[RMDB]
RNA sequence: GGGAACGACUCGAGUAGAGUCGAAAAGAUAUGGAGUUGAACUACACAUGAGGCAGCGUUGAAAUCGGAAACGAUGGAGCUGACAAAUGUGCAACUCCUAAGUCAAAGAUGCUGUUCGCAGCAUCAACCGCGAACUAUUGUUCGCAAUAGUUCGCGGAAAAGAAACAACAACAACAAC
Reactivity to DMS in 0.01 (KOAc 150mM, MgCl2 10mM, bicine 150mM(pH8.5), 24C), signal-to-noise 2, nucleotides 027 to 126: g000a010u020a300u000g000g000a040g000u000u020g000a080a050c120u020a300c000a000c030a000u010g000a300g020g010c010a000g010c000g010u020u010g000a140a110a030u000c000g000g000a090a130a210c010g000a000u000g000g000a120g020c000u000g020a000c000a010a110a020u000g000u000g000c000a000a000c010u000c000c000u000a010a060g010u000c070a050a100a200g000a010u000g030c000u000g010u000u010c240g000c020a010g010c010a010u000c020a100a090
Reactivity to 2A3 in 0.01 (KOAc 150mM, MgCl2 10mM, bicine 150mM(pH8.5), 24C), signal-to-noise 1, nucleotides 027 to 126: g090a010u080a070u140g030g000a040g010u020u000g040a110a020c070u210a010c250a000c010a000u030g030a030g150g000c000a010g010c020g300u300u010g060a010a070a000u020c010g020g020a070a030a010c010g000a000u010g000g040a000g070c000u000g030a010c000a010a060a000u000g000u000g000c000a000a000c000u000c000c000u020a100a010g020u050c050a010a080a110g020a000u010g000c000u020g050u100u150c270g010c160a020g010c000a000u000c010a000a030
The data come from the RNA Mapping Database (RMDB), library TTRDEL. An RNA of 177 nucleotides, treated with DMS and 2A3 and read out base by base. The RNA was probed in 150 mM KOAc, 10 mM MgCl2 and 150 mM bicine (pH 8.5) at 24 C. For 2A3, 2,141 sequencing reads were counted.